This 177-nucleotide RNA was probed chemically with DMS and 2A3. The reactions ran in a buffer of 150 mM KOAc, 10 mM MgCl2 and 150 mM bicine (pH 8.5), at 24 C. The 2A3 profile rests on 1,131 reads.
[RMDB]
RNA sequence: GGGAACGACUCGAGUAGAGUCGAAAAAUAAGUUUAGUGUUUUAUAGGUACUUAAUAGAGAGUGUGUAUGCAUGUGUGUGUGCUUGUGGUGGCUAUGGAAAGGGGGCACUGACUGGUGAUGCUGAUAUACCUAUCGCUGUUUCGACAGCGAUAGGUAAAAAGAAACAACAACAACAAC
Reactivity to DMS in 0.01 (KOAc 150mM, MgCl2 10mM, bicine 150mM(pH8.5), 24C), signal-to-noise 2, nucleotides 027 to 126: a100u020a050a060g000u010u000u010a060g000u000g030u000u010u010u010a070u010a110g040g010u010a050c050u000u000a070a100u030a080g020a060g000a100g020u020g020u000g000u030a040u020g020c020a030u010g000u020g020u010g000u000g020u010g000c010u000u010g020u010g000g050u020g010g000c050u010a070u010g010g020a040a070a130g010g000g000g000g030c060a040c040u010g000a000c030u000g000g000u000g000a040u010g000c020u010g000a090u000a220
Reactivity to 2A3 in 0.01 (KOAc 150mM, MgCl2 10mM, bicine 150mM(pH8.5), 24C), signal-to-noise 2, nucleotides 027 to 126: a000u160a140a080g010u000u080u110a010g030u040g040u050u000u060u110a110u070a040g100g050u020a010c030u070u130a040a020u200a050g090a000g020a020g070u040g000u000g030u010a050u200g020c000a020u030g070u000g020u020g000u000g010u000g130c010u070u090g030u020g080g000u040g010g010c110u080a050u070g000g000a000a060a100g000g000g000g000g000c000a010c030u030g020a010c000u000g070g000u080g000a010u040g020c020u010g040a010u020a000